RNA sequence: GGGAACGACUCGAGUAGAGUCGAAAAAAAUAUUGAUUUGCCCCAGUUUACCUCCUCUGACUGGCCAUUUGCAGACUGAGGAAUUGGCCUCUGUAGGGACCUGAUUUUUGAGUUACUUUCCGCCCGCCGAUGAAAUAUAGUUCGCUAUAUUUCAUCGAAAAGAAACAACAACAACAAC
Reactivity to 2A3 in 0.01 (KOAc 150mM, MgCl2 10mM, bicine 150mM(pH8.5), 24C), signal-to-noise 2, nucleotides 027 to 126: a000a000a010u150a010u050u050g050a060u050u010u140g010c000c000c000c020a010g000u050u060u070a090c010c010u010c000c020u020c010u040g050a080c000u030g030g070c080c040a160u110u100u130g030c020a010g020a110c020u060g030a010g070g000a050a050u070u080g020g010c040c000u040c030u050g070u120a050g060g030g020a060c000c010u020g060a100u040u000u080u130u170g060a050g000u030u030a030c030u030u020u010c010c020g040c000c000c000g010c040
Reactivity to DMS in 0.01 (KOAc 150mM, MgCl2 10mM, bicine 150mM(pH8.5), 24C), signal-to-noise 4, nucleotides 027 to 126: a050a050a040u000a040u010u000g000a140u000u010u000g010c060c010c020c050a100g010u000u010u010a100c080c040u000c020c040u000c030u000g020a100c070u000g010g010c080c080a100u010u000u000g020c050a060g010a070c090u000g000a070g010g010a060a070u000u000g010g010c030c030u010c020u000g020u000a090g010g010g000a050c060c020u000g000a050u000u000u000u000u000g010a100g010u000u000a050c080u000u000u000c030c040g020c020c010c010g030c190
Conditions: 150 mM KOAc, 10 mM MgCl2 and 150 mM bicine (pH 8.5), 24 C.
Chemical mapping of a 177-nucleotide RNA with 2A3 and DMS.
2A3 adducts were read by reverse transcription with SuperScript II with manganese.
Reactivities are given for positions 27 through 126.